[RMDB]
RNA sequence: GGGAACGACUCGAGUAGAGUCGAAAACUUCGUGGAACGCGUCGCCGAGGGCCGCAAGAUGACUACCGACGCCGUGGACGUCGUUGCGCGAGGCCGGGUCUGGACCGGUGCCGACGCUCUCGAUCGCGUAGCAGAGAUAUUUCGAUAUCUCUGCUACAAAAGAAACAACAACAACAAC
Reactivity to DMS in 0.01 (KOAc 150mM, MgCl2 10mM, bicine 150mM(pH8.5), 24C), signal-to-noise 9, nucleotides 027 to 126: c060u000u000c030g040u000g000g000a050a040c050g010c030g010u000c030g020c080c040g010a130g010g010g020c030c030g020c090a080a100g010a100u000g010a100c100u010a130c160c020g010a080c120g010c060c080g010u010g010g010a050c030g010u000c020g010u000u000g000c080g010c040g000a080g010g000c010c010g000g000g000u000c120u010g020g000a130c020c010g000g010u000g020c110c010g000a050c040g010c010u000c010u000c010g000a050u000c060g010c160
Reactivity to 2A3 in 0.01 (KOAc 150mM, MgCl2 10mM, bicine 150mM(pH8.5), 24C), signal-to-noise 9, nucleotides 027 to 126: c010u060u040c020g030u060g040g100a080a020c030g000c010g020u030c040g030c090c030g040a140g030g050g010c030c020g010c040a030a030g080a170u170g040a050c050u080a080c040c050g110a060c060g060c070c030g090u140g050g010a020c010g010u160c030g040u030u060g060c010g000c010g020a040g010g000c010c010g030g000g020u110c160u240g080g110a160c010c010g010g020u050g080c040c010g010a040c010g000c010u000c000u000c010g040a060u060c030g000c040